[RMDB]
RNA sequence: GGGAACGACUCGAGUAGAGUCGAAAACGAAGGAAAGCUUGACCAGCUGAUCUUCUGCAACGCCAUUACGAGGACUGCCCUUAGAGGCUCAUGGCGAUAGGUCACCCCGCCGGUCGGUCAGCUGCUUAUACCCGUGCACGGUUCGCCGUGCACGGAACUUCCAUAUUAGGUUCGCCUAAUAUGGAAGAAAAGAAACAACAACAACAAC
Reactivity to DMS in 0.01 (KOAc 150mM, MgCl2 10mM, bicine 150mM(pH8.5), 24C), signal-to-noise 1, nucleotides 027 to 156: c030g020a080a060g000g000a070a170a070g020c050u000u000g000a080c050c060a240g000c020u000g000a160u000c010u000u000c040u020g000c010a140a150c000g000c010c020a070u000u000a120c110g010a120g020g010a120c070u010g010c030c010c020u000u000a170g020a110g000g000c010u000c030a080u000g000g040c020g020a150u000a090g030g000u000c020a110c060c000c020c040g070c080c060g040g010u000c110g000g000u000c040a120g000c020u000g000c000u000u000a170u000a100c060c010c000g000u000g000c000a010c000g010g000u000u010c300g000c030c010g040u010g010c010a010c030g000g000a000a010
Reactivity to 2A3 in 0.01 (KOAc 150mM, MgCl2 10mM, bicine 150mM(pH8.5), 24C), signal-to-noise 3, nucleotides 027 to 156: c040g060a030a020g060g050a200a040a030g020c060u080u060g040a080c030c010a000g000c000u000g010a050u000c020u040u000c020u090g020c040a120a110c000g010c020c000a020u110u140a050c100g050a040g100g060a100c140u110g020c000c000c010u100u130a130g070a190g120g000c000u020c050a010u010g000g000c010g030a060u120a080g000g020u070c040a140c000c030c010c020g040c010c000g050g040u060c010g010g010u010c010a000g000c020u060g020c010u100u120a080u090a190c000c000c000g000u000g000c010a000c000g000g060u020u050c140g020c070c000g010u010g000c000a000c000g010g000a000a000